[RMDB]
RNA sequence: GGGAACGACUCGAGUAGAGUCGAAAAGAGCCAGUGACCCGCAUGCGGCGUGAUGUCCAACAGUACUGUGCGUAGAUUUUGUUUUACUUGGAACAAUUAUACUGAAUUGAACUACGCGCUGUGUCAACGAUUAUAGCAUCUUCGGAUGCUAUAAUCGAAAAGAAACAACAACAACAAC
Reactivity to DMS in 0.01 (KOAc 150mM, MgCl2 10mM, bicine 150mM(pH8.5), 24C), signal-to-noise 6, nucleotides 027 to 126: g010a110g010c010c030a070g010u010g000a140c050c020c040g030c120a050u000g010c070g020g000c030g020u010g010a130u020g010u000c020c020a060a090c100a060g020u000a060c090u000g020u010g000c040g020u000a020g000a160u000u000u000u000g010u000u000u010u000a090c170u010u010g020g000a070a030c020a030a040u000u000a120u010a100c110u010g020a090a130u010u000g000a050a100c010u000a150c060g000c000g010c000u000g010u000g000u000c130a080a190
Reactivity to 2A3 in 0.01 (KOAc 150mM, MgCl2 10mM, bicine 150mM(pH8.5), 24C), signal-to-noise 6, nucleotides 027 to 126: g040a010g040c030c020a030g040u030g110a110c030c020c020g030c070a040u130g020c030g050g000c010g020u040g030a060u100g030u010c020c020a030a010c020a080g040u060a040c030u040g030u050g080c020g020u020a020g000a240u030u050u030u110g090u040u030u030u030a120c100u100u230g100g010a040a010c010a020a060u160u070a090u070a110c070u070g070a180a150u120u050g020a040a020c000u030a020c020g020c010g000c010u010g030u020g040u070c030a050a040